[RMDB]
RNA sequence: GGGAACGACUCGAGUAGAGUCGAAAAGAAGCGGCCCGCAAGGCGGAAGCCGAGCGCCUUGCAGCGGCGAAGGAAAAAGCCGGGGAAUCCACGCCUGGCGACCGCCAUUUGCGCGCGCAGAGCGACAGCUAAUACCUCGAUUCGUCGAGGUAUUAGCAAAAGAAACAACAACAACAAC
Reactivity to 2A3 in 0.01 (KOAc 150mM, MgCl2 10mM, bicine 150mM(pH8.5), 24C), signal-to-noise 1, nucleotides 027 to 126: g060a170a020g030c020g020g030c040c030c000g010c010a010a020g000g000c000g040g010a010a000g050c030c010g010a020g010c010g050c010c040u050u160g150c060a050g090c010g000g000c000g060a060a070g040g120a010a100a020a030a060g040c000c010g040g020g000g050a030a080u080c110c010a010c010g030c010c010u000g000g000c010g000a000c000c000g020c000c030a030u080u080u050g000c010g030c020g000c030g000c030a010g050a010g190c040g040a030c020a040
Reactivity to DMS in 0.01 (KOAc 150mM, MgCl2 10mM, bicine 150mM(pH8.5), 24C), signal-to-noise 2, nucleotides 027 to 126: g000a220a290g010c000g000g010c000c040c000g000c060a030a070g030g060c010g000g030a030a300g010c020c000g010a070g010c000g000c020c070u000u000g020c110a120g030c010g000g000c010g010a070a100g010g000a040a120a070a130a180g010c000c000g010g000g000g010a100a040u020c040c290a100c060g000c020c010u000g010g010c010g000a130c120c050g000c000c020a130u000u000u000g030c010g000c230g010c090g020c010a020g010a200g010c010g000a130c110a070
Structure probing data (2A3 and DMS) for a 177-nucleotide construct. It was measured as part of the RMDB library OK2TST. For 2A3, 1,298 sequencing reads were counted. For DMS the reverse transcriptase was MarathonRT. 2A3 adducts were read by reverse transcription with SuperScript II with manganese.